[RMDB]
RNA sequence: GGGAACGACUCGAGUAGAGUCGAAAAAGCGUCUGUAGUUAUUUGGAUCUGGAGAUGUCAACACAAUUACGGGCCACGUUUCCGGCAAUUUUGUCGGUAUGGGUUCAUCUCUCUCUUUCGCAAAGUCACCGCUCAAAUUCUUCGGAAUUUGAGCGGUAAAAGAAACAACAACAACAAC
Reactivity to 2A3 in 0.01 (KOAc 150mM, MgCl2 10mM, bicine 150mM(pH8.5), 24C), signal-to-noise 2, nucleotides 027 to 126: a000g050c060g030u010c010u000g020u020a000g070u090u080a200u170u130u080g090g010a050u020c080u200g060g010a080g010a040u040g110u130c070a050a070c020a010c000a140a090u110u050a040c070g000g020g000c000c000a090c080g070u060u110u060c030c000g000g000c030a030a040u090u130u130u190g040u000c000g000g000u070a110u090g070g000g000u070u060c000a010u020c000u000c000u000c000u010c000u040u000u040c080g000c010a070a070a040g020u130c000